[RMDB]
RNA sequence: GGGAACGACUCGAGUAGAGUCGAAAACCGUAGGUCAGGAAGAAGUGCGCGUCACGUUUGACGGUUAGUUCGAAAGAGCUAACCCGAGUGACGAACUACGCAUGUAAACUGACCUAAACGGAAAACAUGGGUAUUCGCUUCGGCGAAUACCCAUGAACCUUACUGCAGGUUUCGACCUGCAGUAAGGAAAAGAAACAACAACAACAAC
Reactivity to DMS in 0.01 (KOAc 150mM, MgCl2 10mM, bicine 150mM(pH8.5), 24C), signal-to-noise 2, nucleotides 027 to 156: c030c020g010u000a000g000g000u000c010a040g000g000a070a130g010a140a300g000u000g010c010g020c000g020u000c010a000c030g000u000u010u000g030a160c170g010g000u000u000a000g040u010u010c010g000a210a090a300g010a010g020c000u000a010a020c000c000c000g000a060g030u010g000a010c010g010a030a170c020u010a050c000g010c020a030u010g020u040a000a130a300c030u000g000a010c000c000u000a000a000a050c020g000g000a150a030a060a190c060a010u000g000g000g030u000a000u000u000c000g000c040u010u020c300g060g020c000g000a050a000u000a000c000c000c000a000u000g000a030a050
Reactivity to 2A3 in 0.01 (KOAc 150mM, MgCl2 10mM, bicine 150mM(pH8.5), 24C), signal-to-noise 2, nucleotides 027 to 156: c010c000g000u000a000g010g000u000c010a000g000g020a080a300g000a020a010g070u000g000c010g030c000g010u010c000a000c020g040u050u170u280g050a030c000g010g010u010u000a000g000u010u000c010g060a080a100a060g010a030g030c000u000a000a000c000c000c000g010a030g000u010g000a010c000g000a020a010c020u060a020c010g000c010a000u020g000u000a000a000a010c010u010g030a000c000c000u000a000a000a010c010g020g000a000a080a060a080c000a010u000g000g000g000u040a000u020u000c000g010c020u020u030c190g100g000c000g000a010a000u000a000c010c000c000a000u000g000a000a000

The record gives the reactivity of an RNA of 207 nucleotides to DMS and 2A3. The 2A3 profile rests on 2,328 reads. 2A3 adducts were read by reverse transcription with SuperScript II with manganese. For DMS, 2,048 sequencing reads were counted. Reactivities are given for positions 27 through 156. The RNA was probed in 150 mM KOAc, 10 mM MgCl2 and 150 mM bicine (pH 8.5) at 24 C.